[RMDB]
RNA sequence: GGGAACGACUCGAGUAGAGUCGAAAACUUCACUUCGAUGCCUUGAGCGGGAAAGAUUUCUUCGGCGAUGGUCCGAAGUUCUUCAAAGUCGAAGGUUUGCAGAAACACUUUGUCCUGCUUGCUGGUGGUACUCAAAGCAGUUCGCUGCUUUGAGUACAAAAGAAACAACAACAACAAC
Reactivity to 2A3 in 0.01 (KOAc 150mM, MgCl2 10mM, bicine 150mM(pH8.5), 24C), signal-to-noise 3, nucleotides 027 to 126: c010u160u080c050a010c070u090u090c050g080a040u200g000c020c010u060u130g040a020g010c000g000g030g020a020a070a000g020a000u080u190u040c000u000u000c010g020g000c050g260a290u200g120g150u030c000c000g020a010a000g000u000u000c000u000u000c020a150a140a030g050u030c010g030a020a000g020g050u040u090u050g050c070a030g150a120a070a000c140a050c060u010u070u100g060u050c000c020u030g020c000u030u030g060c070u060g020g040u020g040
Reactivity to DMS in 0.01 (KOAc 150mM, MgCl2 10mM, bicine 150mM(pH8.5), 24C), signal-to-noise 2, nucleotides 027 to 126: c090u000u010c090a140c140u010u000c070g000a100u010g010c040c040u000u000g010a090g000c100g030g020g040a090a060a020g000a060u010u010u010c010u000u000c000g000g030c020g040a180u010g030g010u010c020c000g010a000a000g000u010u010c000u010u010c060a070a060a120g010u000c060g020a030a020g010g030u000u000u010g010c140a090g010a050a050a050c050a100c060u010u000u010g000u010c010c000u010g030c020u000u010g000c090u010g000g010u010g020